[RMDB]
RNA sequence: GGGAACGACUCGAGUAGAGUCGAAAAUGCUUCAAGGCGUCACAACAAUGGUACCAGUCCAGAGUCCCAGUCUGAUCGCUAUGUAGGAGGGACUGUGGCGUCGCAGUGGUAUCGGCGCGACCGAAUAGGCACCGUACUGCUUCGGCAGUAUGGUGCCAAAAGAAACAACAACAACAAC
Reactivity to DMS in 0.01 (KOAc 150mM, MgCl2 10mM, bicine 150mM(pH8.5), 24C), signal-to-noise 1, nucleotides 027 to 126: u030g000c000u010u040c080a210a300g000g070c050g010u010c050a030c070a040a090c140a050a100u040g000g000u010a130c090c030a070g000u000c060c010a010g000a000g020u000c000c000c000a020g000u020c000u000g010a060u020c070g000c080u000a040u000g030u000a260g000g020a170g000g030g000a000c000u000g000u000g000g000c050g000u000c020g010c130a020g010u000g010g030u000a080u000c000g000g020c110g000c000g070a110c040c080g000a160a020u000a080
An RNA of 177 nucleotides, treated with DMS and read out base by base. DMS adducts were read by reverse transcription with MarathonRT. For DMS, 1,512 sequencing reads were counted.